RNA sequence: GGGAACGACUCGAGUAGAGUCGAAAAGAUAUGGAGUAAGACGAAUGCAAGAGAGCUAUUCGGAAACGAAUAGACUCUUGAUGACCACUAUCUUACUCCUAAGUCAAAAGGCGUCUUCGGACGCCAAGCAAUUAAACAUCUUCGGAUGUUUAAUUGCAAAAGAAACAACAACAACAAC
Reactivity to DMS in 0.01 (KOAc 150mM, MgCl2 10mM, bicine 150mM(pH8.5), 24C), signal-to-noise 3, nucleotides 027 to 126: g020a020u000a300u000g000g010a010g010u010a000a010g000a020c170g010a060a070u000g000c040a030a080g020a020g000a110g000c010u000a000u000u010c010g000g000a060a050a120c010g020a010a020u000a000g000a090c000u000c000u000u000g010a090u000g000a080c300c060a040c170u000a130u000c000u000u000a010c020u000c000c000u010a020a070g000u010c040a070a080a090a140g020g000c010g040u000c000u000u030c220g030g000a020c000g030c000c010a000a010
Reactivity to 2A3 in 0.01 (KOAc 150mM, MgCl2 10mM, bicine 150mM(pH8.5), 24C), signal-to-noise 3, nucleotides 027 to 126: g020a010u040a040u110g000g000a010g000u000a010a010g000a040c120g140a300a100u260g040c100a300a090g010a000g020a040g050c010u000a010u000u000c000g010g000a050a030a020c000g000a010a000u010a020g040a110c000u000c000u000u010g020a030u100g080a040c050c060a050c100u060a050u060c000u000u000a000c000u000c010c010u010a050a000g050u010c020a000a040a050a190g020g000c000g020u000c000u050u100c300g140g000a000c000g000c000c000a000a000